RNA sequence: GGGAACGACUCGAGUAGAGUCGAAAAAUAGAGGGCUCUGAUUCCCUGACAGGCUUAACAGCAUAGUAAUGCUGAAUUACUUCAAUUUCUGAAAAUCAACUGUCUCAGCUUCCAUUGAGGGAAAAUUCCAUUUAGCACUUUUGUGGGGGGAAGAGGGCACGACCGUAUAAUUCGUUAUACGGUCGUGAAAAGAAACAACAACAACAAC
Reactivity to 2A3 in 0.01 (KOAc 150mM, MgCl2 10mM, bicine 150mM(pH8.5), 24C), signal-to-noise 2, nucleotides 027 to 156: a000u150a050g060a060g000g040g020c030u030c030u090g060a090u060u030c000c000c000u010g040a030c010a030g020g140c040u090u020a090a040c010a020g020c000a010u050a090g120u270a300a070u020g000c010u020g050a040a060u130u080a020c010u040u030c030a040a280u100u160u000c000u110g060a040a080a040a080u080c000a060a090c020u040g060u050c000u020c050a020g040c050u060u000c030c020a050u000u100g010a010g000g010g000a000a160a000a000u110u040c050c010a080u060u040u120a040g020c000a030c080u090u100u090u200g060u140g010g000g050g010g010g080a010a010g000a040g040g010g030
Reactivity to DMS in 0.01 (KOAc 150mM, MgCl2 10mM, bicine 150mM(pH8.5), 24C), signal-to-noise 1, nucleotides 027 to 156: a100u010a100g010a050g010g010g020c020u000c090u010g000a240u000u010c010c010c010u000g000a050c060a030g000g000c040u000u010a040a150c040a050g020c060a120u000a120g010u000a070a180u010g010c100u010g010a150a080u010u000a050c060u000u000c040a050a090u010u000u000c070u010g010a100a040a050a170u010c030a040a080c070u010g020u000c070u010c090a100g000c030u000u000c030c040a160u000u020g020a130g010g010g000a020a020a010a060u000u010c040c010a270u000u000u010a070g010c010a010c040u000u000u000u010g030u010g000g020g000g020g030g000a050a040g010a080g010g010g040